[RMDB]
RNA sequence: GGGAACGACUCGAGUAGAGUCGAAAAGGAUGCUCUCACAGGAUUGUCUCUGUGUUCCGAAACUCCAACAGUAUUGCUUCGGGACACCUACAGCAAUACUGUAGGUAUAGAGAGUAGGAGAGUAUCGCACUGCUGAGGUAUUCGUACCUCAGCAGUGAAAAGAAACAACAACAACAAC
Reactivity to 2A3 in 0.01 (KOAc 150mM, MgCl2 10mM, bicine 150mM(pH8.5), 24C), signal-to-noise 3, nucleotides 027 to 126: g070g020a010u010g020c000u000c000u020c010a150c050a080g210g070a270u180u290g100u070c000u020c000u000g040u010g000u030u000c000c000g000a020a000a010c050u060c070c030a090a070c020a140g090u130a100u120u130g000c000u000u010c010g030g000g010a040c030a070c000c000u010a010c020a000g000c030a070a050u060a280c020u000g000u000a010g020g000u040a040u160a060g080a010g000a030g060u100a080g030g050a000g000a000g010u000a000u000c000g000
Reactivity to DMS in 0.01 (KOAc 150mM, MgCl2 10mM, bicine 150mM(pH8.5), 24C), signal-to-noise 4, nucleotides 027 to 126: g000g010a010u000g000c010u010c000u010c000a100c090a190g010g010a120u000u020g010u020c030u010c000u000g010u010g020u000u000c010c040g030a010a060a080c060u000c200c150a150a100c180a160g010u010a190u000u010g020c070u000u010c200g000g000g000a040c150a050c000c000u010a020c080a000g000c070a070a090u010a300c010u000g000u000a000g000g000u000a060u010a020g000a040g010a040g000u000a090g000g000a020g000a020g050u000a000u000c010g010
Source: RMDB library OK2TRN, as collected in RNAgym. Structure probing data (2A3 and DMS) for a 177-nucleotide construct. Reactivities are given for positions 27 through 126. The DMS profile rests on 2,766 reads.